[RMDB]
RNA sequence: GGGAACGACUCGAGUAGAGUCGAAAAGGAUAAACUUAUCUACAGAAGUGUCUGUUACUGUUUUGGAAGAGUAAUACUGUUCGCUUAUCCAUAUUUCCCCGUUCUGGGGAAGCCUCAUGGGUAAAUUGAUACAUUUCUUAUUCGUAAGAAAUGUAUCAAAAGAAACAACAACAACAAC
Reactivity to DMS in 0.01 (KOAc 150mM, MgCl2 10mM, bicine 150mM(pH8.5), 24C), signal-to-noise 4, nucleotides 027 to 126: g010g000a080u010a050a080a090c050u020u000a090u010c050u010a110c060a050g010a060a110g020u010g010u010c090u000g000u000u000a050c040u000g000u000u010u000u000g010g010a050a130g010a040g000u000a040a060u000a250c070u000g000u000u010c070g010c110u000u000a020u000c000c000a040u000a120u010u000u000c000c000c010c000g020u020u010c130u010g020g000g000g000a020a010g010c300c100u010c200a040u000g010g000g010u000a020a040a200u000u010
Reactivity to 2A3 in 0.01 (KOAc 150mM, MgCl2 10mM, bicine 150mM(pH8.5), 24C), signal-to-noise 5, nucleotides 027 to 126: g010g010a050u060a070a200a040c040u080u070a070u090c040u080a060c020a050g090a150a060g140u050g060u110c050u060g050u060u030a040c020u020g150u090u090u180u140g130g050a070a030g020a040g080u030a040a040u050a170c030u030g090u070u060c040g000c090u000u020a000u000c010c010a020u010a040u070u000u000c000c000c000c030g090u260u130c090u280g010g000g000g000a000a000g010c010c010u080c070a030u050g030g000g020u030a070a100a090u010u020
Record summary
Source: RMDB library RFMREP, as collected in RNAgym. Chemical mapping of a 177-nucleotide RNA with DMS and 2A3. The 2A3 profile rests on 4,918 reads. The reactions ran in a buffer of 150 mM KOAc, 10 mM MgCl2 and 150 mM bicine (pH 8.5), at 24 C. For DMS the reverse transcriptase was MarathonRT. Values cover nucleotides 27 to 126.